Background: Structure probing data (DMS and 2A3) for a 177-nucleotide construct. The DMS profile rests on 795 reads. For DMS the reverse transcriptase was MarathonRT. The RNA was probed in 150 mM KOAc, 10 mM MgCl2 and 150 mM bicine (pH 8.5) at 24 C.

RNA sequence: GGGAACGACUCGAGUAGAGUCGAAAAUUCCGAGGGGACCGUCCCCCUCGGUAAUGGCGAAUGGGACCCAGAUCUCUCUCUAGCUUCCGAUAGAGAAGCGAGAGAAAGCUGGCUCUCCCUUAGCCAUCUGUUACUUAGAGUUCGCUCUAAGUAACAGAAAAGAAACAACAACAACAAC
Reactivity to DMS in 0.01 (KOAc 150mM, MgCl2 10mM, bicine 150mM(pH8.5), 24C), signal-to-noise 1, nucleotides 027 to 126: u010u000c000c000g000a060g000g040g020g010a100c130c110g030u000c220c010c000c000c020u000c000g000g010u010a030a050u000g000g010c010g020a140a070u010g000g000g010a040c290c010c010a040g000a030u000c010u000c000u000c000u000c010u000a200g030c010u000u000c000c000g000a230u030a090g000a150g010a010a020g070c010g010a000g010a030g010a010a000a050g000c010u000g010g000c040u000c110u010c000c000c010u010u010a200g040c010c000a060u010
Reactivity to 2A3 in 0.01 (KOAc 150mM, MgCl2 10mM, bicine 150mM(pH8.5), 24C), signal-to-noise 2, nucleotides 027 to 126: u100u000c000c000g010a000g000g010g020g010a100c060c050g100u000c000c000c000c000c000u000c000g010g010u020a030a030u020g000g000c010g040a050a020u010g000g000g000a040c010c000c000a030g010a080u060c010u000c000u010c000u010c040u070a070g020c010u020u000c020c010g300a300u120a200g170a010g000a040a010g000c010g000a000g000a010g000a020a010a000g010c000u000g010g000c010u000c000u010c020c010c010u000u020a000g010c010c000a010u000